An RNA of 207 nucleotides, treated with DMS and 2A3 and read out base by base. It was measured as part of the RMDB library ARCHII. Reactivities are given for positions 27 through 156. For DMS the reverse transcriptase was MarathonRT. 2A3 adducts were read by reverse transcription with SuperScript II with manganese. Reactivities are rounded to 0.1 and cut off at 0 and 3. Conditions: 150 mM KOAc, 10 mM MgCl2 and 150 mM bicine (pH 8.5), 24 C.
RNA sequence: GGGAACGACUCGAGUAGAGUCGAAAACUGAGGCGAGUUCCAGUUAAGGGACCGUCGCAACGCGUGGCAAGUGAUGGGCCCCUUUGGCUAGGGGCUUCAGGUACAUGCUAGUCCGCUCGAUCGGCUCGAGCUGGAGAUCAACGAACGGGGAAUUAGGGAUAUACCUUGUGUUCGCACAAGGUAUAUCAAAAGAAACAACAACAACAAC
Reactivity to DMS in 0.01 (KOAc 150mM, MgCl2 10mM, bicine 150mM(pH8.5), 24C), signal-to-noise 3, nucleotides 027 to 156: c050u010g000a080g030g010c010g010a170g020u000u000c000c000a220g030u020u000a130a150g020g020g010a010c000c010g010u000c010g010c010a060a070c070g000c040g050u000g020g010c050a090a150g010u000g010a240u000g000g030g040c000c000c010c000u010u010u000g020g040c090u000a030g030g020g010g030c000u000u000c010a000g010g050u010a080c030a130u000g020c010u000a100g000u000c000c010g000c020u010c020g000a060u000c120g010g030c080u000c020g010a070g010c020u010g010g010a070g000a070u000c040a070a080c060g000a060a000c070g000g000g010g030a080a130u010u000a160g000g020
Reactivity to 2A3 in 0.01 (KOAc 150mM, MgCl2 10mM, bicine 150mM(pH8.5), 24C), signal-to-noise 6, nucleotides 027 to 156: c050u070g020a050g010g000c010g050a170g070u050u020c020c000a080g060u130u240a170a260g010g000g010a020c000c010g000u020c000g000c010a060a090c050g020c000g050u070g010g030c040a100a080g030u050g090a100u070g010g030g000c010c000c000c010u030u030u090g120g030c150u060a020g010g000g000g000c000u000u010c000a010g000g010u030a010c000a010u070g010c010u030a040g100u000c020c020g010c010u000c000g070a110u050c060g110g050c060u010c020g020a020g000c020u030g010g000a020g010a070u100c040a030a080c060g080a060a000c030g010g000g000g040a030a080u110u060a190g020g130